[RMDB]
RNA sequence: GGGAACGACUCGAGUAGAGUCGAAAACAGAUCGGUCCCGAUUCGACCACCUGCCGAGUGAGUAUCGCCAGACACGCCAGAAGGACCGGGAGUUAUGCAAACAGAUCUAGCACGAUGUGACGACCAGUUGUGUGUGUCUGACAAUCGAGAUCAAGUGCAGUUAUAAAACGUUCGCGUUUUAUAACUGAAAAGAAACAACAACAACAAC
Reactivity to 2A3 in 0.01 (KOAc 150mM, MgCl2 10mM, bicine 150mM(pH8.5), 24C), signal-to-noise 7, nucleotides 027 to 156: c040a020g080a120u110c060g010g010u020c000c010c010g010a030u050u070c040g030a020c010c030a060c010c050u070g030c030c030g040a030g030u040g030a090g050u090a100u170c060g020c050c000a010g010a030c000a010c020g020c020c010a070g050a170a090g140g010a040c030c000g010g010g000a060g010u050u100a070u130g030c050a060a130a060c020a090g080a070u050c040u130a040g060c050a030c100g090a090u120g030u050g090a020c030g030a060c010c050a050g040u110u030g050u070g000u010g000u010g000u070c010u010g020a020c030a020a100u040c050g020a020g010a110u090c050a060a040g110u040g110
Reactivity to DMS in 0.01 (KOAc 150mM, MgCl2 10mM, bicine 150mM(pH8.5), 24C), signal-to-noise 3, nucleotides 027 to 156: c050a100g000a130u000c040g030g010u000c000c000c030g000a300u000u010c040g020a090c010c020a050c050c000u000g000c050c020g030a100g020u000g010a120g010u010a030u000c050g040c020c000a110g020a050c020a050c010g040c020c040a160g030a120a170g010g030a090c020c020g020g000g010a240g040u010u000a030u000g020c080a080a090a300c060a150g000a030u000c040u000a250g010c020a060c050g020a100u010g020u010g000a050c030g000a100c020c000a180g000u000u010g000u000g060u010g040u000g000u010c000u010g000a050c010a080a050u000c040g000a080g020a060u000c050a020a140g010u000g010